[RMDB]
RNA sequence: GGGAACGACUCGAGUAGAGUCGAAAACGUCGUGAACUAGCGACAAUGCUGUAGCUCCAUCGUUAUCUAACCGAAACAUCGUGACUAGUCGUAGAAUAGAACCAGGAGAGGACGCUGGCAAACAAAGACGGGGUGUCUGAUUCGUCGGACGCCCCGUAAAAGAAACAACAACAACAAC
Reactivity to 2A3 in 0.01 (KOAc 150mM, MgCl2 10mM, bicine 150mM(pH8.5), 24C), signal-to-noise 2, nucleotides 027 to 126: c010g000u020c010g030u040g070a070a050c090u010a060g020c000g030a000c040a010a040u040g000c010u000g020u050a010g000c000u000c000c000a070u060c040g010u010u020a020u070c070u050a050a050c010c020g040a050a020a000c020a060u070c010g020u020g020a010c010u010a010g010u000c020g050u040a020g050a070a000u090a010g000a030a050c010c050a030g000g030a080g010a000g050g000a000c000g000c010u000g030g000c040a000a040a020c030a020a130a010g190
Reactivity to DMS in 0.01 (KOAc 150mM, MgCl2 10mM, bicine 150mM(pH8.5), 24C), signal-to-noise 4, nucleotides 027 to 126: c160g010u000c020g000u020g010a100a110c130u010a100g010c010g020a080c010a080a090u040g010c040u000g000u000a040g000c000u000c000c020a050u000c030g000u010u010a060u010c060u000a100a110c080c040g000a100a080a060c070a110u010c060g010u010g000a080c050u010a070g000u030c020g000u010a060g000a040a090u020a040g030a090a060c090c060a070g000g000a070g000a040g000g000a010c070g000c000u010g000g040c100a070a060a070c100a060a090a100g000